[RMDB]
An RNA of 177 nucleotides, treated with DMS and 2A3 and read out base by base.
2A3 adducts were read by reverse transcription with SuperScript II with manganese.
As a SHAPE reagent, 2A3 marks flexible, mostly unpaired nucleotides at the ribose 2'-OH.
For DMS the reverse transcriptase was MarathonRT.
It was measured as part of the RMDB library OK1LIB.

RNA sequence: GGGAACGACUCGAGUAGAGUCGAAAACAAACAAAGCAAAAUUGUCCAUUGCGGUCUACCGUCAGAAUUUCGGGCGGAUCUACGACAUUAUACAGAAAGCCGGCCGCAAUGUCGUAUAGAAAGGAAAAUUUACUACGUCGUUCGCGACGUAGUAAAUAAAAGAAACAACAACAACAAC
Reactivity to DMS in 0.01 (KOAc 150mM, MgCl2 10mM, bicine 150mM(pH8.5), 24C), signal-to-noise 3, nucleotides 027 to 126: c080a100a130a140c100a110a070a090g000c210a020a070a100a090u000u030g020u020c100c000a030u000u040g000c010g030g010u000c020u050a030c000c000g050u000c010a050g020a050a220u000u030u000c000g030g000g000c010g000g040a140u000c080u030a200c110g000a050c100a050u040u010a080u010a040c220a130g000a080a020a080g040c140c110g000g010c010c010g000c000a020a000u000g000u000c100g000u020a020u060a110g010a040a070a160g010g000a030a050a050
Reactivity to 2A3 in 0.01 (KOAc 150mM, MgCl2 10mM, bicine 150mM(pH8.5), 24C), signal-to-noise 2, nucleotides 027 to 126: c030a000a000a010c080a040a030a060g130c020a040a040a120a200u100u030g070u010c000c000a000u010u060g010c010g000g000u000c010u030a020c000c010g000u000c000a050g160a300a140u160u120u130c030g050g000g000c000g000g130a050u070c010u200a030c070g100a000c010a050u200u200a120u210a150c000a050g230a020a060a000g140c100c000g000g030c000c000g000c000a000a000u020g000u000c000g000u000a110u010a120g050a000a060a010g200g000a030a060a000